Notes
Chemical mapping of a 207-nucleotide RNA with DMS and 2A3. For DMS the reverse transcriptase was MarathonRT. Conditions: 150 mM KOAc, 10 mM MgCl2 and 150 mM bicine (pH 8.5), 24 C.
[RMDB]
RNA sequence: GGGAACGACUCGAGUAGAGUCGAAAAAUGUAGAAAGUGAUGGGAGGUCUGGGUGCUGUGGCUCAUGCCUUUAAUCCCAGCAACUUAGGAGGCUGAACUGGGAGAAUUACUUCAGGCCUGGACUUUGAGACCAGCUUGAGCAACAUAGUGAGAUCCACUAUAGGAGUCGAUUCGUCGACUCCUAUAGAAAAGAAACAACAACAACAAC
Reactivity to DMS in 0.01 (KOAc 150mM, MgCl2 10mM, bicine 150mM(pH8.5), 24C), signal-to-noise 1, nucleotides 027 to 156: a050u010g020u000a080g030a160a070a100g000u000g050a120u010g000g010g000a090g000g020u000c090u000g030g030g010u010g050c000u000g020u010g000g020c020u000c030a050u000g000c050c020u020u000u000a110a260u000c020c010c000a060g020c040a050a110c040u010u000a110g010g010a100g000g030c000u010g010a040a080c030u000g000g000g010a110g010a140a100u010u010a050c080u000u010c040a070g020g020c000c020u020g030g010a100c070u000u020u010g000a200g020a040c000c000a120g000c000u000u020g020a050g010c050a060a030c020a050u000a050g020u010g010a090g010a140u010c040c010a210
Reactivity to 2A3 in 0.01 (KOAc 150mM, MgCl2 10mM, bicine 150mM(pH8.5), 24C), signal-to-noise 2, nucleotides 027 to 156: a000u040g000u030a020g080a090a070a020g020u030g070a050u060g040g050g020a040g000g020u000c030u010g010g010g030u070g050c010u060g020u070g030g000c000u050c120a050u180g000c020c010u040u150u100a040a030u020c010c000c000a000g000c000a010a020c030u090u070a030g020g080a030g070g050c040u030g010a040a020c030u040g000g050g050a020g000a010a030u110u030a060c030u040u060c040a030g000g060c030c000u020g000g010a040c050u040u030u130g070a070g010a030c000c020a000g060c040u040u030g000a010g030c010a020a030c040a040u100a030g050u040g040a070g000a070u060c000c040a020